[RMDB]
RNA sequence: GGGAACGACUCGAGUAGAGUCGAAAAAGCUGCUCAAAAUCGGCGGAAAGGACCCCGCUAUCGGGAGAGGCUAGCAGCGAGGGUUGCCGCUCCAGCCGCGCUAUGAAGCAGUCAUAGCAGAUUUACAACCUAUCAUGCUCUUCGGAGCAUGAUAGGUAAAAGAAACAACAACAACAAC
Reactivity to DMS in 0.01 (KOAc 150mM, MgCl2 10mM, bicine 150mM(pH8.5), 24C), signal-to-noise 2, nucleotides 027 to 126: a090g020c000u000g000c050u010c260a050a030a040a110u000c000g030g010c010g000g000a010a160a200g020g000a040c020c000c000c000g030c010u000a070u000c140g000g030g000a170g020a080g010g000c190u000a040g040c220a040g020c010g000a110g020g020g010u010u000g020c020c010g000c180u000c010c000a050g030c030c000g000c300g030c010u010a010u000g000a070a100g010c080a080g000u000c010a000u000a020g010c010a150g000a160u000u000u000a080c210a120
Reactivity to 2A3 in 0.01 (KOAc 150mM, MgCl2 10mM, bicine 150mM(pH8.5), 24C), signal-to-noise 1, nucleotides 027 to 126: a070g020c000u030g010c020u060c180a000a080a090a170u220c010g000g000c000g010g000a030a060a030g000g020a030c000c000c000c000g020c000u060a060u160c070g060g070g040a210g050a020g170g160c060u030a030g020c010a000g000c010g000a270g000g000g010u040u130g210c010c000g010c030u000c000c040a060g000c010c010g010c000g000c000u010a000u020g010a040a040g020c030a010g020u040c000a000u010a000g040c000a040g050a200u110u180u090a100c040a090